[RMDB]
RNA sequence: GGGAACGACUCGAGUAGAGUCGAAAACGGCACGAAAAACACCAUGGCUCCCGCCCACCGUACGUCCGGGCGAUCGCGGGUGUAAUACGUCAGGUAUGGAUACAUGUCCCCCGCCCGCACUUUGGCGACUACGGGAAAACUUCGGUUUUCCCGUAGUAAAAGAAACAACAACAACAAC
Reactivity to 2A3 in 0.01 (KOAc 150mM, MgCl2 10mM, bicine 150mM(pH8.5), 24C), signal-to-noise 8, nucleotides 027 to 126: c020g010g020c030a010c090g120a140a020a020a040a010c060a030c020c010a090u050g050g000c020u020c020c010c010g020c020c000c010a070c010c030g090u150a070c040g030u020c010c020g010g030g010c030g040a050u100c090g000c000g020g050g010u020g010u030a050a060u130a070c070g040u080c100a020g100g050u100a050u160g050g050a050u080a140c070a060u130g080u070c000c000c000c000c000g000c000c000c000g050c010a030c050u100u080u090g040g010c020g030
Reactivity to DMS in 0.01 (KOAc 150mM, MgCl2 10mM, bicine 150mM(pH8.5), 24C), signal-to-noise 3, nucleotides 027 to 126: c100g020g030c090a070c090g030a020a100a060a130a100c070a050c050c030a020u000g000g010c040u040c050c040c030g020c040c010c020a060c070c090g000u010a090c050g040u020c030c060g000g040g000c070g000a100u060c140g020c020g010g030g010u010g000u030a060a040u010a050c050g020u000c070a080g010g000u020a020u010g010g000a140u010a050c060a020u020g000u000c000c000c000c070c000g000c010c030c030g000c080a070c050u000u000u010g000g000c060g000